[RMDB]
RNA sequence: GGGAACGACUCGAGUAGAGUCGAAAACCGAGUGAGUUCGCUCACUCGGAAAGAAGUGUGCGCAUACUGCUGCGACAGUAGCGACAAGAGCAGCAAGCUAAAAAACAAACCUGUUCGCAGGUUUGAACUAUUCAUGUGGAUUCGUCCACAUGAAUAGAAAAGAAACAACAACAACAAC
Reactivity to 2A3 in 0.01 (KOAc 150mM, MgCl2 10mM, bicine 150mM(pH8.5), 24C), signal-to-noise 6, nucleotides 027 to 126: c000c000g000a000g000u000g000a010g000u030u190c200g040c100u000c010a000c000u000c000g000g030a050a040a000g070a060a040g110u090g020u090g140c020g000c030a120u030a080c000u030g020c030u120g130c030g040a030c020a010g020u030a010g020c000g040a040c030a030a070g030a020g100c040a010g020c040a080a060g010c040u160a170a110a040a020a020a010c010a010a010a000c000c000u020g020u040u050c210g000c070a000g010g040u000u000u010g000a020a020
Reactivity to DMS in 0.01 (KOAc 150mM, MgCl2 10mM, bicine 150mM(pH8.5), 24C), signal-to-noise 5, nucleotides 027 to 126: c000c010g000a020g010u000g000a030g020u000u000c200g010c000u000c010a010c000u000c000g000g000a010a060a080g010a090a080g010u000g010u000g010c020g010c020a100u000a060c040u000g010c010u010g020c120g010a100c080a020g010u000a040g000c020g000a070c050a060a100g000a090g010c020a060g000c100a070a100g000c060u010a000a040a060a100a070a120c010a010a010a010c000c000u000g010u000u010c160g020c010a020g000g000u000u010u000g000a060a170